[RMDB]
RNA sequence: GGGAACGACUCGAGUAGAGUCGAAAAGAAAUUAGUGUUUGAGCCUUAUGGUGCUGAUUCUGCUGUUACAUGGUUCGUGUUUGAGUGGAAUGGGUCAUAGACCAUGUGGCGAUUCUCGAUCAGCUCAGGACGAAGUUGGCUUCGGCUAACUUCGUCCAAAAGAAACAACAACAACAAC
Reactivity to 2A3 in 0.01 (KOAc 150mM, MgCl2 10mM, bicine 150mM(pH8.5), 24C), signal-to-noise 6, nucleotides 027 to 126: g080a000a030a030u140u120a070g060u020g070u050u090u090g020a010g040c000c000u120u060a120u160g090g000u040g010c020u000g020a010u070u010c020u080g090c110u120g030u080u000a020c000a030u010g020g160u060u110c080g030u060g150u170u150u110g230a230g030u120g040g100a100a090u080g120g040g000u020c010a030u020a020g010a000c000c010a000u000g000u000g000g000c000g010a030u060u000c050u010c010g010a030u010c010a000g030c030u020c060a030
Reactivity to DMS in 0.01 (KOAc 150mM, MgCl2 10mM, bicine 150mM(pH8.5), 24C), signal-to-noise 3, nucleotides 027 to 126: g000a040a090a080u010u020a050g000u010g000u020u010u000g000a120g000c050c010u020u020a070u020g000g000u020g000c010u020g000a040u000u000c040u000g000c190u030g010u000u010a000c010a000u000g000g000u010u010c050g040u020g020u000u010u010g010a090g040u000g000g020a110a050u020g010g010g010u010c050a050u010a100g010a010c000c000a000u010g010u000g000g000c020g020a140u000u000c030u010c090g000a080u000c050a080g000c000u010c060a170
Conditions: 150 mM KOAc, 10 mM MgCl2 and 150 mM bicine (pH 8.5), 24 C.
An RNA of 177 nucleotides, treated with 2A3 and DMS and read out base by base.
The 2A3 profile rests on 6,252 reads.
2A3 adducts were read by reverse transcription with SuperScript II with manganese.